[RMDB]
RNA sequence: GGGAACGACUCGAGUAGAGUCGAAAAUCAAACCCGCCCUUGUAGCACAGUGGUAGAGCGCUUCACUCGUAUUCCAAUACUGCCAUGAAGAGGUCCGCGGUUCAAUCCCGCGUGGUGGCAAAAAAAACAAUAGUCUUAGCUUCGGCUAAGACUAUUGAAAAGAAACAACAACAACAAC
Reactivity to DMS in 0.01 (KOAc 150mM, MgCl2 10mM, bicine 150mM(pH8.5), 24C), signal-to-noise 3, nucleotides 027 to 126: u010c140a080a110a140c020c020c010g010c060c000c020u000u000g000u000a050g010c060a050c080a060g000u000g000g010u010a030g000a130g020c080g020c030u000u000c040a100c030u010c030g010u000a110u000u020c030c020a070a050u030a110c110u010g000c000c010a020u010g010a070a080g010a100g030g000u000c080c020g020c020g000g010u000u010c220a080a160u010c300c010c010g010c020g010u000g020g030u010g020g020c040a000a000a000a010a050a060a030a120
Reactivity to 2A3 in 0.01 (KOAc 150mM, MgCl2 10mM, bicine 150mM(pH8.5), 24C), signal-to-noise 1, nucleotides 027 to 126: u080c000a040a010a090c010c030c020g050c020c010c000u040u120g070u060a020g020c060a040c040a110g060u040g090g030u060a040g030a000g050c050g000c040u050u090c060a040c010u060c030g070u070a160u110u030c040c000a020a070u010a140c030u060g030c020c000a000u060g040a060a060g050a030g110g050u060c070c010g030c020g000g000u040u070c030a040a050u030c020c010c020g050c010g000u030g000g000u030g000g040c080a000a040a110a040a000a000a000a040